[RMDB]
RNA sequence: GGGAACGACUCGAGUAGAGUCGAAAAGAGGAGUCAUUCGUGACUCCUCAAAGGGAGCUCAACUCUCCCGCUCAAGUCCGAGAGCCUUCGGACCCAAAUGAAUGCUGUUCCUGUUCGCAGGAACAAAAGAUGGAGAACAAUUCGUUGUUCUCCAUCUAAAAGAAACAACAACAACAAC
Reactivity to 2A3 in 0.01 (KOAc 150mM, MgCl2 10mM, bicine 150mM(pH8.5), 24C), signal-to-noise 6, nucleotides 027 to 126: g000a010g010g000a000g010u010c010a020u080u090c130g100u080g000a000c000u000c010c000u000c000a000a000a000g000g000g000a010g010c020u040c190a030a080c040u000c000u000c060c000c000g020c010u050c030a090a020g010u000c010c010g010a020g010a060g240c030c050u060u010c000g000g000a010c000c010c010a110a130a050u240g130a140a050u170g070c070u050g030u000u000c000c000u010g000u020u020c220g020c030a000g010g000a010a000c000a010a030a000
Reactivity to DMS in 0.01 (KOAc 150mM, MgCl2 10mM, bicine 150mM(pH8.5), 24C), signal-to-noise 6, nucleotides 027 to 126: g000a010g010g000a010g010u000c000a040u000u010c190g030u000g010a010c000u000c000c000u000c000a010a030a060g000g000g000a010g010c180u010c280a090a130c290u010c000u000c000c000c000g010c100u000c060a090a150g000u000c000c000g000a020g000a080g010c140c090u000u000c010g000g000a040c000c080c060a060a120a090u010g000a100a090u010g010c150u000g000u000u000c000c000u000g010u000u010c170g010c020a020g000g000a010a000c000a010a020a080
An RNA of 177 nucleotides, treated with 2A3 and DMS and read out base by base. Reactivities are rounded to 0.1 and cut off at 0 and 3. Values cover nucleotides 27 to 126. DMS (dimethyl sulfate) methylates the pairing face of unpaired adenines and cytosines.